[RMDB]
RNA sequence: GGGAACGACUCGAGUAGAGUCGAAAAGUAAUAGAUAACUGGAUGCAGCGUAGGUCCCAACGCAUAUCCAGUACGAAUGGUACCUGUAAAUAAAAUAUGGGACCUAGUACAAGUACCAACAGAAGGAUAAGCGAUGGUGAUGUCAAUCACAUUUGCACCCUUUUAAUCAGUUCGCUGAUUAAAAGGGAAAAGAAACAACAACAACAAC
Reactivity to 2A3 in 0.01 (KOAc 150mM, MgCl2 10mM, bicine 150mM(pH8.5), 24C), signal-to-noise 3, nucleotides 027 to 156: g040u050a030a170u060a140g110a090u110a130a010c010u000g000g000a010u030g160c230a190g000c280g030u060a040g000g040u020c000c000c000a020a000c000g000c000a010u010a010u100c000c020a000g000u050a000c050g060a090a160u110g020g000u060a050c000c000u010g040u030a000a130a120u160a060a110a180a010u190a090u000g010g000g000a000c020c000u020a030g010u000a000c000a000a000g000u000a020c010c040a020a010c010a040g180a130a040g100g030a050u080a140a040g000c010g010a010u050g040g140u050g000a030u050g100u110c040a080a020u040c000a020c010a070u050u060u140g010c040a090
Reactivity to DMS in 0.01 (KOAc 150mM, MgCl2 10mM, bicine 150mM(pH8.5), 24C), signal-to-noise 2, nucleotides 027 to 156: g020u000a100a090u000a110g020a110u000a120a100c030u010g030g000a020u000g000c150a050g000c020g030u000a040g020g000u010c020c000c000a140a070c000g040c000a160u000a160u000c020c020a010g040u010a050c080g000a130a140u000g020g000u000a020c000c000u010g040u010a030a100a210u000a070a090a010a140u000a150u010g010g020g020a040c000c040u010a050g030u000a060c000a000a030g010u000a020c000c020a060a160c120a080g010a090a110g000g020a130u010a000a080g000c060g000a040u020g010g030u010g000a060u020g040u000c120a120a080u000c010a020c060a230u010u000u010g040c020a210